Source information:
The record gives the reactivity of an RNA of 177 nucleotides to DMS and 2A3. The DMS profile rests on 4,933 reads. For DMS the reverse transcriptase was MarathonRT. It was measured as part of the RMDB library OK2TST. The 2A3 profile rests on 1,579 reads.
RNA sequence: GGGAACGACUCGAGUAGAGUCGAAAAAGUACUUGUUCUGAAGUUACGCACCCGUUGCAGCGUGUAUGCAGGGUAGAGAUCGUAGCACAUAAAAACUAUCUGCCAGAUUGUGGGAUAGCAAACGGUCAAUUAUGCCCGUAUUCGUACGGGCAUAAUUAAAAGAAACAACAACAACAAC
Reactivity to DMS in 0.01 (KOAc 150mM, MgCl2 10mM, bicine 150mM(pH8.5), 24C), signal-to-noise 4, nucleotides 027 to 126: a130g010u000a040c050u000u000g010u000u010c090u010g000a070a070g000u000u000a030c040g010c160a120c010c010c010g020u010u010g020c030a050g000c120g020u000g020u020a060u000g020c020a170g000g010g010u000a050g010a110g010a070u000c010g020u000a080g020c070a080c140a090u010a050a080a050a100a080c020u010a020u000c010u000g010c040c070a120g000a140u010u000g020u010g000g000g000a050u000a040g020c070a050a070a070c080g010g000u000c050
Reactivity to 2A3 in 0.01 (KOAc 150mM, MgCl2 10mM, bicine 150mM(pH8.5), 24C), signal-to-noise 3, nucleotides 027 to 126: a000g090u060a040c080u110u090g090u140u070c040u140g030a100a020g010u110u050a000c010g000c010a060c000c020c000g200u230u130g000c040a040g000c080g150u140g070u200a030u020g020c020a020g050g000g040u040a050g050a000g000a110u050c040g010u010a010g040c060a020c040a170u280a040a190a020a010a000c010u020a020u040c020u150g130c000c010a060g110a300u090u120g080u130g100g000g010a010u010a010g080c040a040a060a050c030g020g010u050c000